[RMDB]
RNA sequence: GGGAACGACUCGAGUAGAGUCGAAAAACUUUGUGGAACUACUUGUUUGAGACUAUUCCCACACAGUUGUUCCCACUCUUAUUUGUGACUAUGGCCUUCGUUAUGUUGUUGGUUAAACACAAACACAGACGUGUACCGUUCGCGGUACACAAAAGAAACAACAACAACAAC
Reactivity to DMS in 0.01 (KOAc 150mM, MgCl2 10mM, bicine 150mM(pH8.5), 24C), signal-to-noise 7, nucleotides 027 to 129: a030c030u010u000u010g040u010g000g000a130a120c150u110a110c090u010u000g000u010u000u000g020a300g000a120c050u000a150u000u000c000c000c000a070c040a080c120a020g000u000u000g010u040u010c000c000c000a150c150u080c050u020u030a090u000u000u000g020u000g010a130c150u050a070u030g020g030c000c040u020u030c040g000u000u000a110u040g070u060u040g030u010u030g070g010u000u030a030a100a090c130a040c040a050a050a060c190a130c170a000g050a140c200
Reactivity to 2A3 in 0.01 (KOAc 150mM, MgCl2 10mM, bicine 150mM(pH8.5), 24C), signal-to-noise 5, nucleotides 027 to 129: a010c020u020u040u030g030u030g010g050a030a010c060u060a060c040u170u170g130u150u120u270g160a050g060a020c060u090a130u050u120c000c000c000a010c000a000c010a000g000u010u010g010u020u030c000c010c020a030c010u080c020u050u180a130u050u030u050g010u000g000a040c030u020a120u090g020g020c000c000u020u040c040g080u200u030a120u260g100u160u070g000u000u000g000g030u030u050a060a120a000c010a000c000a010a090a000c050a010c040a070g090a030c040